The record gives the reactivity of an RNA of 177 nucleotides to DMS. Values cover nucleotides 27 to 126.
RNA sequence: GGGAACGACUCGAGUAGAGUCGAAAAGAUAUGGAACUUGUGAGCCACCGAGAAGUGAACUACUGAGAAGUAUCGGAAACGAUACGGAUCAGCACUUCGUUUGACGUGGCUCACAAGUUCCUAAGUCCUAGGUAGGAGAGUUCGCUCUCCUACCUAGAAAAGAAACAACAACAACAAC
Reactivity to DMS in 0.01 (KOAc 150mM, MgCl2 10mM, bicine 150mM(pH8.5), 24C), signal-to-noise 2, nucleotides 027 to 126: g000a060u000a300u010g000g010a020a000c000u020u000g050u000g000a020g020c010c000a030c000c050g010a190g000a000a000g020u000g000a080a040c060u000a300c010u000g000a000g020a300a300g020u000a010u000c000g010g010a100a060a210c010g000a020u010a000c030g000g020a300u000c010a010g000c000a000c070u010u000c000g000u010u000u000g000a180c300g000u000g010g000c000u000c000a000c000a000a000g000u000u000c000c000u000a000a070g000u000c050

Record summary:
DMS adducts were read by reverse transcription with MarathonRT.